RNA sequence: GGGAACGACUCGAGUAGAGUCGAAAAGCCUUACGAUUCGUCGUAAGGCAUACAAAGUUUUGGCACUAUGAGCCCGCAGCGUUGGUGCUCCCUCGCGGUGCAAUACGACGGAUUUCGAUCCGUCGAAGGGAAUAAGUAAAUUCGUUUACUUAUUCCCAAAAGAAACAACAACAACAAC
Reactivity to 2A3 in 0.01 (KOAc 150mM, MgCl2 10mM, bicine 150mM(pH8.5), 24C), signal-to-noise 9, nucleotides 027 to 126: g000c000c000u000u000a000c000g010a010u020u070c190g040u000c000g000u140a000a010g000g000c000a000u040a010c030a000a120a030g010u030u060u140u170g080g000c020a010c030u080a080u240g050a020g010c010c040c020g000c040a150g050c050g120u190u160g040g030u160g030c010u040c010c010c000u060c040g030c070g000g020u030g010c020a030a060u110a110c010g000a000c000g000g010a010u060u040u100c170g060a010u000c000c000g000u000c000g000a010a000
Reactivity to DMS in 0.01 (KOAc 150mM, MgCl2 10mM, bicine 150mM(pH8.5), 24C), signal-to-noise 9, nucleotides 027 to 126: g010c000c000u000u000a010c000g010a020u000u010c200g030u000c000g010u000a010a000g000g010c000a010u010a020c140a090a110a120g010u000u000u000u010g010g010c010a030c040u000a100u000g000a060g000c040c050c050g010c100a080g000c080g010u000u000g010g020u010g010c040u000c030c080c020u000c060g020c080g010g010u000g000c040a070a070u010a140c020g010a010c000g010g000a020u000u000u010c170g010a030u000c000c000g010u000c000g000a040a060